[RMDB]
An RNA of 177 nucleotides, treated with 2A3 and read out base by base. The reactions ran in a buffer of 150 mM KOAc, 10 mM MgCl2 and 150 mM bicine (pH 8.5), at 24 C. Reactivities are rounded to 0.1 and cut off at 0 and 3. Values cover nucleotides 27 to 126.
RNA sequence: GGGAACGACUCGAGUAGAGUCGAAAAGCAGUAUACUGCCACUUGUGUGAGAAUACUUUUAGUACAAGCGAGUACACGCUCUAUACUGCCACUUGUGUGAGAAUACUUUUUGUACAAGCGAGUACACACGCCGAAUGACGUUCGCGUCAUUCGGCGUAAAAGAAACAACAACAACAAC
Reactivity to 2A3 in 0.01 (KOAc 150mM, MgCl2 10mM, bicine 150mM(pH8.5), 24C), signal-to-noise 2, nucleotides 027 to 126: g000c010a010g000u060a020u010a060c030u050g010c010c010a030c000u030u030g020u030g020u090g080a140g090a090a030u090a070c030u170u180u010u230a020g000u000a040c000a010a010g060c000g020a000g000u000a100c020a000c100g040c000u010c000u010a050u000a000c060u040g000c060c000a060c010u110u030g010u000g000u010g070a050g050a100a000u100a120c000u040u040u020u050u140g050u010a000c000a000a050g100c160g040a020g010u000a000c010a000c000